[RMDB]
RNA sequence: GGGAACGACUCGAGUAGAGUCGAAAACCAGAUCACGGUCCUGCCAUGAGACCGCAACGAGAGCAUGUCGCAUCGAAUGGACUCGGGGAGUCGGCAGCUUGCCCCACGGAUGAGCGCCUAAUGCCGGAAGAGACGUGCAACUUCGGUUGCACGUCAAUCCUUCUAUUCUCUUCGGAGAAUAGAAGGAAAAAGAAACAACAACAACAAC
Reactivity to 2A3 in 0.01 (KOAc 150mM, MgCl2 10mM, bicine 150mM(pH8.5), 24C), signal-to-noise 2, nucleotides 027 to 156: c000c000a020g030a160u160c040a010c060g000g000u010c000c010u070g070c060c010a100u160g040a100g010a100c020c070g030c100a070a060c110g060a020g020a000g040c040a100u190g010u150c070g000c030a070u070c020g050a030a070u110g010g020a020c010u020c100g000g000g010g040a050g060u070c030g040g000c000a020g020c010u010u040g040c010c000c000c000a070c060g020g010a130u030g070a050g010c000g040c030c020u060a090a060u150g020c020c000g000g070a040a030g100a010g000a020c000g000u030g000c000a000a000c010u060u010c200g070g010u000u000g000c000a010c000g000u010c000a000a010
Reactivity to DMS in 0.01 (KOAc 150mM, MgCl2 10mM, bicine 150mM(pH8.5), 24C), signal-to-noise 2, nucleotides 027 to 156: c000c030a080g010a090u010c040a040c020g010g030u000c060c010u010g000c060c150a060u000g010a100g000a030c020c080g070c030a120a240c100g000a130g000a150g000c000a110u020g040u000c050g000c010a080u010c010g010a090a300u010g010g000a090c080u000c050g000g000g100g000a150g020u000c030g030g030c040a080g060c060u040u050g020c080c000c000c070a130c110g030g000a110u010g000a100g030c030g000c060c050u000a060a070u000g010c010c010g000g030a050a090g010a230g000a040c000g090u080g040c010a000a010c000u010u010c260g070g000u000u000g020c010a000c010g000u000c010a030a050

An RNA of 207 nucleotides, treated with 2A3 and DMS and read out base by base. The DMS profile rests on 2,460 reads. The RNA was probed in 150 mM KOAc, 10 mM MgCl2 and 150 mM bicine (pH 8.5) at 24 C. 2A3 is a SHAPE reagent: it acylates the 2'-hydroxyl of flexible nucleotides of all four kinds. Values are in units of 0.01, from 0 to 300, in steps of 10.